[RMDB]
RNA sequence: GGGAACGACUCGAGUAGAGUCGAAAAAGACAGUCGCUUCCGUCCUGGUGACGGGGGAGGAAAGUCCGGGCUCCAUAGGGCAGGGUGCCAGGUAACGCCUGGGGGGCGAGAGUCCACGGAAAGUGCCCGAACAUUAUUGCUUCGGCAAUAAUGUUCGAAAAGAAACAACAACAACAAC
Reactivity to 2A3 in 0.01 (KOAc 150mM, MgCl2 10mM, bicine 150mM(pH8.5), 24C), signal-to-noise 3, nucleotides 027 to 126: a020g050a020c030a040g030u040c000g020c070u030u000c010c000g040u000c010c050u200g180g000u190g020a000c000g000g000g010g010g020a040g000g070a130a090a010g020u000c040c040g040g030g010c000u040c090c010a070u240a180g000g030g000c060a050g050g030g010u060g050c010c000a000g040g000u030a060a030c060g100c070c020u040g010g050g000g000g000g000c030g000a040g010a000g030u000c020c010a030c020g030g010a090a060a040g040u070g030c000c000
Reactivity to DMS in 0.01 (KOAc 150mM, MgCl2 10mM, bicine 150mM(pH8.5), 24C), signal-to-noise 3, nucleotides 027 to 126: a090g030a090c090a070g020u000c030g010c020u000u000c000c030g020u010c010c040u000g020g030u060g000a030c010g020g000g000g010g000a040g000g000a060a090a150g020u000c020c050g010g000g000c010u010c030c020a120u020a150g000g020g040c070a090g000g000g000u010g030c040c030a000g000g000u010a110a120c190g040c000c010u000g010g000g000g000g000g040c060g020a120g000a100g030u000c000c030a260c080g020g010a050a030a060g000u010g000c020c020